This 177-nucleotide RNA was probed chemically with 2A3 and DMS.
DMS adducts were read by reverse transcription with MarathonRT.
The DMS profile rests on 6,800 reads.
2A3 is a SHAPE reagent: it acylates the 2'-hydroxyl of flexible nucleotides of all four kinds.
Source: RMDB library OK1LIB, as collected in RNAgym.

[RMDB]
RNA sequence: GGGAACGACUCGAGUAGAGUCGAAAAGAAGCCUCUUGCAAGUCGCGGGAGCCUACACCGACGGUCUCUGGCGGUGCCAGGGCCCGGCGUGUGUCGGCGUGGGAGAUUGCGGGUGCCAAGCCGUGGGGCGCCUAGCUACCUUCGGGUAGUUAGGCGCAAAAGAAACAACAACAACAAC
Reactivity to 2A3 in 0.01 (KOAc 150mM, MgCl2 10mM, bicine 150mM(pH8.5), 24C), signal-to-noise 4, nucleotides 027 to 126: g110a040a030g050c000c010u030c010u040u090g060c070a080a070g040u090c030g020c040g040g010g030a020g010c000c000u000a000c000a000c000c000g010a010c000g000g010u000c000u000c000u000g030g030c140g280g230u300g000c000c000a010g000g000g000c000c000c000g000g010c000g000u250g000u000g010u030c050g000g000c020g000u040g010g010g010a110g030a060u030u120g020c030g010g000g010u030g000c020c030a070a030g010c040c030g030u100g000g020g010
Reactivity to DMS in 0.01 (KOAc 150mM, MgCl2 10mM, bicine 150mM(pH8.5), 24C), signal-to-noise 3, nucleotides 027 to 126: g010a130a130g000c030c020u000c050u000u020g040c080a090a070g020u020c060g030c080g020g010g000a140g010c010c010u000a010c010a000c010c000g000a020c000g000g000u020c000u000c000u000g010g000c020g040g030u050g020c010c020a010g010g000g010c000c010c000g000g000c010g000u050g010u010g010u000c040g000g000c010g010u000g020g000g020a130g000a090u010u020g000c040g000g010g010u010g040c070c060a090a130g000c050c050g010u030g020g000g000